[RMDB]
RNA sequence: GGGAACGACUCGAGUAGAGUCGAAAAUUAAAGGAGUGAAGGUACAAGCGACAGUGUCCAACUGAGGUAAUCGACCACUGCCAGUACCAAGACGUGCGUUGUCAACUCAAAGGCAGAACGCAAAAAACGUAGUAUAGUGCUUCGGCACUAUACUACGAAAAGAAACAACAACAACAAC
Reactivity to DMS in 0.01 (KOAc 150mM, MgCl2 10mM, bicine 150mM(pH8.5), 24C), signal-to-noise 2, nucleotides 027 to 126: u010u010a110a110a100g010g000a060g020u000g060a170a130g010g000u010a020c020a070a130g000c050g030a010c010a020g000u000g000u000c040c140a100a100c090u000g000a030g030g000u010a060a090u010c110g000a060c190c030a060c010u000g010c020c000a140g000u000a000c020c010a050a120g010a050c080g010u000g000c050g010u010u000g000u000c010a000a060c040u000c090a030a080a060g000g000c020a060g000a070a010c010g000c030a010a000a040a100a050a140
Reactivity to 2A3 in 0.01 (KOAc 150mM, MgCl2 10mM, bicine 150mM(pH8.5), 24C), signal-to-noise 2, nucleotides 027 to 126: u130u090a080a040a000g120g030a100g040u100g080a210a040g060g000u000a020c030a060a160g040c100g150a100c020a020g000u010g040u060c050c040a090a050c120u150g050a070g130g090u130a070a080u090c090g080a040c000c040a020c020u030g000c000c000a000g020u010a030c000c030a000a020g020a010c050g050u050g000c030g030u030u030g020u020c020a040a120c060u020c080a000a010a010g010g000c050a040g050a170a020c000g000c000a020a020a020a000a090a050